RNA sequence: GGGAACGACUCGAGUAGAGUCGAAAACGUAGGUCUUCCACUAGUGCCAAACUCAAGUGAAGAAUAUGCUUGUGGCACCAUCUGGAAAUUGUAAAAGGGAACUAACUAGUGGAUGGUUCCAUUUGUCUCAGUGCUCGAAUUUCGAUUCGAGCACUGAAAAAGAAACAACAACAACAAC
Reactivity to DMS in 0.01 (KOAc 150mM, MgCl2 10mM, bicine 150mM(pH8.5), 24C), signal-to-noise 1, nucleotides 027 to 126: c070g010u020a050g020g020u010c070u000u010c000c000a010c060u020a020g000u000g030c010c020a060a170a130c290u020c010a020a020g000u000g010a130a170g010a130a190u010a040u000g020c030u000u030g000u000g040g000c020a070c090c040a040u000c100u010g000g000a020a100a060u000u010g010u020a030a040a070a090g000g000g050a060a050c030u000a040a060c030u000a100g000u000g010g000a090u000g020g010u000u010c010c000a140u000u000u010g000u010c110
Reactivity to 2A3 in 0.01 (KOAc 150mM, MgCl2 10mM, bicine 150mM(pH8.5), 24C), signal-to-noise 1, nucleotides 027 to 126: c050g040u080a090g140g100u030c040u050u000c000c000a000c030u010a010g040u000g060c030c000a160a040a190c150u070c040a020a020g010u110g080a190a140g020a200a190u250a110u290g000c000u010u040g020u080g030g000c000a070c060c000a100u010c000u110g040g090a210a170a200u280u160g080u300a060a030a050a070g040g020g000a000a000c000u010a090a030c010u010a060g030u030g010g050a010u010g000g040u030u010c010c000a040u070u070u130g180u010c050
This 177-nucleotide RNA was probed chemically with DMS and 2A3. The reactions ran in a buffer of 150 mM KOAc, 10 mM MgCl2 and 150 mM bicine (pH 8.5), at 24 C.